[RMDB]
RNA sequence: GGGAACGACUCGAGUAGAGUCGAAAACUCUCUGGACAGCACGGGGUCACCGUUCAAAACCUUCUUGGUGAGCUCUAUGGGAAAGCCGGCUUGAACCAGGAGUGGGGUCUGAUUCGCUACAUCUCAGGCCUUCUCAGGAAGAAAGUGGAGGUCCUGAGAGUGCUCGUGCAUUCGUGCACGAGCACUCAAAAGAAACAACAACAACAAC
Reactivity to 2A3 in 0.01 (KOAc 150mM, MgCl2 10mM, bicine 150mM(pH8.5), 24C), signal-to-noise 1, nucleotides 027 to 156: c030u000c000u020c030u060g020g020a050c000a020g000c030a030c040g010g000g080g030u030c120a030c060c030g030u150u080c100a030a100a050a070c050c050u130u060c070u070u140g000g000u010g000a000g050c000u060c070u220a250u160g050g000g030a000a160a000g230c010c020g020g000c000u030u040g070a070a070c020c000a020g000g030a010g030u040g080g000g000g020u000c020u020g030a080u130u030c070g050c180u130a080c030a120u070c000u010c000a010g010g000c080c000u000u000c000u060c000a040g060g100a090a060g120a080a100a000g020u040g000g010a060g040g010u160c000c000u000g010a010
Structure probing data (2A3) for a 207-nucleotide construct. Values cover nucleotides 27 to 156.